[RMDB]
RNA sequence: GGGAACGACUCGAGUAGAGUCGAAAAGCACUACUCAACAUCAACACUAUAACAGCUUUUAUCACAUUUACUAUCCUCAUUCUAUUAACUAUUCUUGAAUUUGCAGUAGCUCUGAUCCAAGCUUAUGUGUUUACACUGCUAGUAAGCUUAUACCUACGGUUGGCACUAUCUUCGGAUAGUGCCAACCAAAAGAAACAACAACAACAAC
Reactivity to 2A3 in 0.01 (KOAc 150mM, MgCl2 10mM, bicine 150mM(pH8.5), 24C), signal-to-noise 2, nucleotides 027 to 156: g000c000a010c040u040a000c010u080c010a040a050c010a210u110c050a040a200c020a020c050u150a050u080a300a110c100a080g020c040u020u020u050u090a030u100c020a000c040a130u030u060u090a060c000u020a020u070c000c040u020c070a060u070u000c020u020a110u170u050a070a120c040u080a040u170u220c030u150u100g040a070a060u060u060u030g010c000a000g000u020a010g030c000u020c040u090g000a020u030c030c010a000a000g000c000u050u020a000u050g030u000g020u000u000u000a020c050a020c000u110g060c000u000a010g000u000a000a090g000c000u020u010a020u030a160c000c000u000a030c050